[RMDB]
RNA sequence: GGGAACGACUCGAGUAGAGUCGAAAAACCAUCCUAUUCGUAGGAUGGUGCACCAUUGCCGAUUGUAUAUAAUACCGCAGCCGGAAAAGCGGUUCAAAUAAGGAACUUGUCAGUUCGCUGACAAGAAGAGACUAAUUGAUUUCGAUCAAUUAGUCUCAAAAGAAACAACAACAACAAC
Reactivity to 2A3 in 0.01 (KOAc 150mM, MgCl2 10mM, bicine 150mM(pH8.5), 24C), signal-to-noise 6, nucleotides 027 to 126: a000c000c000a000u000c010c000u020a030u030u070c230g070u050a010g000g000a000u000g000g000u000g010c010a040c050c000a080u030u220g070c010c020g120a100u080u080g120u040a100u020a030u020a250a230u110a070c010c010g010c050a050g110c060c060g170g000a050a110a050a010g010c000g010g000u010u080c020a030a040a040u110a070a100g080g000a030a090c000u000u010g010u000c000a000g010u010u060c170g000c090u000g000a000c000a000a000g010a010a020
Reactivity to DMS in 0.01 (KOAc 150mM, MgCl2 10mM, bicine 150mM(pH8.5), 24C), signal-to-noise 6, nucleotides 027 to 126: a020c000c000a010u000c000c000u000a020u000u010c160g030u000a000g010g010a010u000g010g000u000g000c160a180c030c020a150u020u010g010c020c030g020a130u010u010g010u000a070u010a080u010a100a110u000a050c020c020g010c010a090g000c070c060g000g000a060a060a080a100g000c020g000g010u000u000c110a050a060a080u020a090a120g000g000a110a140c000u000u000g000u000c000a000g010u000u010c210g010c000u000g000a000c000a010a010g010a090a070

The record gives the reactivity of an RNA of 177 nucleotides to 2A3 and DMS.
For DMS the reverse transcriptase was MarathonRT.
2A3 adducts were read by reverse transcription with SuperScript II with manganese.
The data come from the RNA Mapping Database (RMDB), library M2PK50.
For 2A3, 10,644 sequencing reads were counted.